[RMDB]
RNA sequence: GGGAACGACUCGAGUAGAGUCGAAAAAGGACCCCUUCAGCGAACAGAACGAUCGCUUCACGCGGUGGGAGCAAGACCAUAGCGAUAGGAAGAGAUGCUAGGAGUUGGUGGCGACCGGAGCGAGGAGUAACGUGCCUCUUCGGAGGCACGAAAAGAAACAACAACAACAAC
Reactivity to DMS in 0.01 (KOAc 150mM, MgCl2 10mM, bicine 150mM(pH8.5), 24C), signal-to-noise 4, nucleotides 027 to 129: a000g000g030a140c080c020c010c050u000u040c000a110g030c000g030a000a000c070a120g030a110a070c090g030a060u020c050g020c000u000u050c000a180c060g050c070g030g080u040g000g030g030a100g000c170a110a080g040a130c070c040a080u040a130g020c050g050a080u020a100g030g000a110a030g010a010g000a060u020g030c060u030a000g000g000a040g040u050u060g000g030u040g000g000c120g010a030c040c050g010g000a080g010c100g020a060g000g000a080g020u030a000a000
Reactivity to 2A3 in 0.01 (KOAc 150mM, MgCl2 10mM, bicine 150mM(pH8.5), 24C), signal-to-noise 5, nucleotides 027 to 129: a000g070g020a070c010c000c000c000u020u070c070a030g030c010g040a080a050c020a090g040a040a030c060g060a070u020c000g000c000u080u150c080a060c060g010c000g040g030u040g030g010g020a080g060c100a060a000g030a100c020c000a050u100a010g010c000g080a080u080a040g090g020a000a020g010a000g000a010u040g020c010u020a040g030g020a060g050u090u040g080g050u020g030g010c020g010a050c010c010g020g000a010g000c010g010a020g010g020a010g020u020a070a000

The data come from the RNA Mapping Database (RMDB), library 15KLIB. An RNA of 170 nucleotides, treated with DMS and 2A3 and read out base by base. The 2A3 profile rests on 7,692 reads. 2A3 is a SHAPE reagent: it acylates the 2'-hydroxyl of flexible nucleotides of all four kinds. For 2A3 the reverse transcriptase was SuperScript II with manganese.